[RMDB]
RNA sequence: GGGAACGACUCGAGUAGAGUCGAAAAGAUAUGGAUUCUUGUGGGAGCUCCUCGGAAACGAGAAGAGCAUCGAUCACGUGAAUCCUAAGUCAAAAGUUACAGUUACGCUUCGGCGUAACUGUAACAAGCACUGUACUCAGUUCGCUGAGUACAGUGCAAAAGAAACAACAACAACAAC
Reactivity to 2A3 in 0.01 (KOAc 150mM, MgCl2 10mM, bicine 150mM(pH8.5), 24C), signal-to-noise 2, nucleotides 027 to 126: g040a030u070a030u120g000g000a010u010u060c060u240u300g000u000g000g080g030a030g000c000u000c000c000u000c020g000g070a040a070a030c030g030a010g060a300a160g000a020g010c020a070u260c040g080a040u070c000a000c000g010u020g010a000a000u000c020c000u040a080a010g060u050c050a090a000a000a140g000u000u000a010c010a020g000u000u000a010c000g000c010u080u160c300g110g000c000g000u020a010a000c000u000g000u010a000a000c000a000a000
Reactivity to DMS in 0.01 (KOAc 150mM, MgCl2 10mM, bicine 150mM(pH8.5), 24C), signal-to-noise 2, nucleotides 027 to 126: g020a040u000a300u010g000g000a020u010u000c000u000u030g050u010g000g010g000a040g030c000u000c010c000u000c000g020g020a070a080a190c000g000a000g000a090a070g030a050g010c000a140u000c080g000a090u010c010a000c010g010u000g010a020a010u000c000c000u000a010a140g000u010c030a040a070a070a050g000u000u000a000c010a010g000u010u000a000c000g010c000u000u020c270g010g020c000g000u000a000a000c000u000g020u000a000a000c000a070a090